[RMDB]
RNA sequence: GGGAACGACUCGAGUAGAGUCGAAAAGAUAUGGAGGCACCCAAGACGCAAAGGGUGGUCGGAAACGACCACUACUGAACUACGUCGACGGUGCCUCCUAAGUCAAAGCUCAAGUUCGCUUGAGCAACAAAACUGUACAGUUCGCUGUACAGUUUUGAAAAGAAACAACAACAACAAC
Reactivity to 2A3 in 0.01 (KOAc 150mM, MgCl2 10mM, bicine 150mM(pH8.5), 24C), signal-to-noise 3, nucleotides 027 to 126: g020a010u050a040u130g000g000a000g000g000c000a000c000c000c000a010a030g000a000c030g010c110a140a130a000g050g010g000u000g000g010u000c000g040g000a040a040a020c020g000a010c000c000a000c000u050a150c010u030g020a100a070c090u190a060c230g010u020c000g010a010c010g000g010u000g000c000c000u000c000c000u020a000a000g000u000c000a000a110a020g000c000u000c000a000a000g000u100u160c250g030c220u000u000g010a000g000c000a000a000
Reactivity to DMS in 0.01 (KOAc 150mM, MgCl2 10mM, bicine 150mM(pH8.5), 24C), signal-to-noise 8, nucleotides 027 to 126: g000a030u010a300u000g000g010a010g010g010c010a000c000c000c010a050a300g000a020c000g000c050a040a140a050g010g000g010u000g000g000u010c000g010g000a080a100a200c010g010a010c000c000a000c000u000a050c020u000g000a120a220c120u010a060c020g010u000c010g000a300c300g000g000u000g000c000c000u000c000c000u000a000a050g000u000c040a090a070a100g000c000u000c000a000a010g000u000u010c240g020c010u000u010g010a010g000c000a080a090